[RMDB]
RNA sequence: GGGAACGACUCGAGUAGAGUCGAAAAACAUCUCACUGGGAAGUGAGAUGUGAGUCCGCAUGGGAAUGCGGACGGUCGAUUUGACAAAAGUCCUAAUUGUCAAGAGGAGAACGAGAUGUACGGGAGUAGAUCGAGUUCUGCUCGCAGAAUAGGCAGCGUGAUGACGUGUAUUCGUACACGUCAUCACAAAAGAAACAACAACAACAAC
Reactivity to 2A3 in 0.01 (KOAc 150mM, MgCl2 10mM, bicine 150mM(pH8.5), 24C), signal-to-noise 1, nucleotides 027 to 156: a000c000a010u000c000u000c000a000c010u020g020g030g060a060a000g010u000g000a010g010a000u000g000u000g000a030g000u010c000c000g000c000a030u030g040g030g040a100a070u100g010c010g000g000a000c000g000g000u030c000g030a110u030u010u110g000a000c010a000a020a000a000g010u000c000c000u010a020a040u010u030g000u020c020a020a000g000a010g020g050a000g000a000a000c040g010a000g000a010u000g010u100a010c020g020g040g020a050g010u010a000g000a010u000c000g000a000g000u010u000c000u000g000c000u000c010g000c050a020g030a040a050u070a020g020g000c030a010g040c010
Reactivity to DMS in 0.01 (KOAc 150mM, MgCl2 10mM, bicine 150mM(pH8.5), 24C), signal-to-noise 2, nucleotides 027 to 156: a000c000a000u000c000u000c010a030c010u000g010g020g010a300a050g040u020g000a000g030a010u000g010u000g000a120g000u000c000c000g010c000a010u010g010g000g000a300a070u000g010c000g010g010a000c000g010g000u000c030g010a090u000u000u010g000a090c000a000a030a000a020g000u010c030c020u000a120a160u000u010g050u010c050a050a150g020a060g000g010a050g030a010a030c070g010a300g000a030u010g050u000a080c060g050g000g020a290g020u000a040g000a010u000c010g000a300g000u000u010c020u000g000c010u000c010g000c070a090g000a080a180u000a090g020g010c020a150g000c200